[RMDB]
RNA sequence: GGGAACGACUCGAGUAGAGUCGAAAAUGUCAGUCUUCCAACUUUGCUCUUCUUCAAUAUUAUAUUGGCUAUUCUGGGUCUUUUGCCUCUCCAUAUAAACUUUAGGAUCAGUUUGUCCAUAUCCACAAAGUAACUUCUGGGAUUUUGAUUGGGAUUACUAAUCAAAAUCAUUCGUGAUUUUGAUUAGAAAAGAAACAACAACAACAAC
Reactivity to DMS in 0.01 (KOAc 150mM, MgCl2 10mM, bicine 150mM(pH8.5), 24C), signal-to-noise 1, nucleotides 027 to 156: u000g030u010c080a130g010u000c040u010u010c000c030a090a140c030u010u000u000g030c020u000c030u000u000c020u000u000c020a110a090u000a100u000u010a130u000a130u010u010g020g010c050u000a090u000u000c030u000g000g010g010u000c000u000u000u000u050g010c040c020u000c020u010c020c020a110u010a090u000a020a050a070c030u010u010u000a060g000g000a040u000c040a090g010u000u000u000g000u010c050c040a080u000a040u010c020c020a090c020a030a040a080g010u000a070a070c070u000u010c090u020g030g020g010a060u000u000u010u000g000a090u010u010g010g030g010a120u010u000a120
Reactivity to 2A3 in 0.01 (KOAc 150mM, MgCl2 10mM, bicine 150mM(pH8.5), 24C), signal-to-noise 3, nucleotides 027 to 156: u100g040u030c020a010g010u010c020u050u000c010c010a050a050c040u060u080u110g020c020u000c000u100u050c010u080u070c050a060a080u090a090u260u180a130u100a080u150u150g010g010c030u030a070u140u070c050u070g030g050g100u050c020u070u130u090u110g030c020c010u040c010u000c010c010a060u100a030u080a130a160a110c030u050u090u160a070g010g020a020u020c030a040g030u020u090u110g010u000c010c010a000u010a040u100c040c000a070c050a100a070a010g030u040a080a040c020u060u060c040u040g010g090g000a100u090u080u020u130g020a020u010u070g020g010g010a010u030u060a030
This 207-nucleotide RNA was probed chemically with DMS and 2A3. For DMS, 3,346 sequencing reads were counted. The reactions ran in a buffer of 150 mM KOAc, 10 mM MgCl2 and 150 mM bicine (pH 8.5), at 24 C. For 2A3, 1,553 sequencing reads were counted.